[RMDB]
RNA sequence: GGGAACGACUCGAGUAGAGUCGAAAAGGCGCUGGCCGAGCGCGAACCGGCCGACUACUGCGCAACGGCCGGCCGGGCCGAUGCGGUGCAGCAGCUGGGCGUGCUGCCCUCCAUGGAGGACGCCGCCUAAUGUCUUGGAGUUCGCUCCAAGACAUUAAAAAGAAACAACAACAACAAC
Reactivity to 2A3 in 0.01 (KOAc 150mM, MgCl2 10mM, bicine 150mM(pH8.5), 24C), signal-to-noise 2, nucleotides 027 to 126: g030g000c020g000c010u010g040g000c030c000g000a030g030c080g000c070g020a040a110c000c000g000g010c020c010g010a030c020u120a020c060u140g080c090g030c180a060a070c070g010g000c030c000g000g010c000c010g020g020g030c030c020g020a020u120g040c000g000g070u170g150c010a010g000c000a020g000c010u060g000g020g000c020g100u270g010c050u170g040c020c000c010u030c000c000a180u300g110g000a010g010g000a010c020g000c000c000g000c010c010
Reactivity to DMS in 0.01 (KOAc 150mM, MgCl2 10mM, bicine 150mM(pH8.5), 24C), signal-to-noise 3, nucleotides 027 to 126: g010g010c010g020c000u000g000g000c010c010g000a100g030c030g030c090g000a060a070c020c010g000g010c000c000g000a050c030u010a170c170u000g020c170g020c140a100a060c140g010g000c010c000g010g020c020c010g010g000g010c070c020g000a080u020g000c020g000g020u000g020c010a000g020c000a110g040c040u000g010g000g000c000g010u010g040c000u000g040c020c000c000u010c010c040a130u020g020g010a020g010g010a030c010g000c000c000g010c000c010